An RNA of 177 nucleotides, treated with DMS and read out base by base. Values cover nucleotides 27 to 126. The RNA was probed in 150 mM KOAc, 10 mM MgCl2 and 150 mM bicine (pH 8.5) at 24 C.
RNA sequence: GGGAACGACUCGAGUAGAGUCGAAAAUUGAUCAUUGGUUGAAAGUCAUUAUUUAUUUCCAACACUGGAUUGUCACAUAAAUUCCUAAGGAAGAGUUACCUUGUGUGUACUCAGUGCAGUCAGAGUACUACGCCAUCGAGUUCGCUCGAUGGCGUAGAAAAGAAACAACAACAACAAC
Reactivity to DMS in 0.01 (KOAc 150mM, MgCl2 10mM, bicine 150mM(pH8.5), 24C), signal-to-noise 1, nucleotides 027 to 126: u000u020g010a040u000c030a080u000u000g000g000u010u000g010a110a100a120g000u010c100a080u010u000a040u000u000u000a170u030u010u000c080c000a080a080c120a040c100u000g000g010a030u000u000g030u000c030a080c030a090u000a040a100a300u000u000c010c000u000a080a060g010g020a130a070g000a070g000u000u000a040c050c060u000u000g000u010g030u010g050u020a010c010u000c000a060g020u000g010c040a030g000u020c070a160g020a080g030u000a090